[RMDB]
RNA sequence: GGGAACGACUCGAGUAGAGUCGAAAACGACUGCGUUUCGACGCAGUCGAACAUUAUGUGGUGAAAUAUAAAAGCCGUAAUUCCGAUACCAUAUAAUUUAAAUUACCUACGAGUUCGCUCGUAGGAAGAUAAAUCACAACUUCGGUUGUGAUUUAUCAAAAGAAACAACAACAACAAC
Reactivity to DMS in 0.01 (KOAc 150mM, MgCl2 10mM, bicine 150mM(pH8.5), 24C), signal-to-noise 3, nucleotides 027 to 126: c010g000a010c000u000g010c020g010u000u000u020c170g010a030c000g020c000a000g000u000c010g010a040a100c110a070u000u000a010u000g010u000g000g000u000g000a100a140a050u000a130u010a080a070a040a110g010c030c070g000u000a070a180u020u000c040c020g000a100u020a030c000c010a010u010a000u010a010a010u000u010u010a030a070a110u010u010a150c000c000u010a000c000g010a010g010u000u020c220g020c010u000c000g020u010a010g010g010a020a040
Reactivity to 2A3 in 0.01 (KOAc 150mM, MgCl2 10mM, bicine 150mM(pH8.5), 24C), signal-to-noise 5, nucleotides 027 to 126: c010g000a000c000u010g000c000g010u030u030u110c220g030a020c000g000c000a000g010u000c000g000a000a000c000a010u030u040a020u030g020u010g000g040u050g060a080a160a020u260a030u050a140a170a060a030g090c060c020g040u050a100a190u110u060c040c010g040a070u060a130c000c010a000u010a010u030a040a050u030u110u190a140a210a190u100u140a100c000c000u000a000c000g000a000g000u050u110c180g040c070u000c000g000u000a000g000g000a000a000
The data come from the RNA Mapping Database (RMDB), library M2PK50. Chemical mapping of a 177-nucleotide RNA with DMS and 2A3. The 2A3 profile rests on 5,346 reads. For DMS the reverse transcriptase was MarathonRT. The RNA was probed in 150 mM KOAc, 10 mM MgCl2 and 150 mM bicine (pH 8.5) at 24 C. Reactivities are given for positions 27 through 126.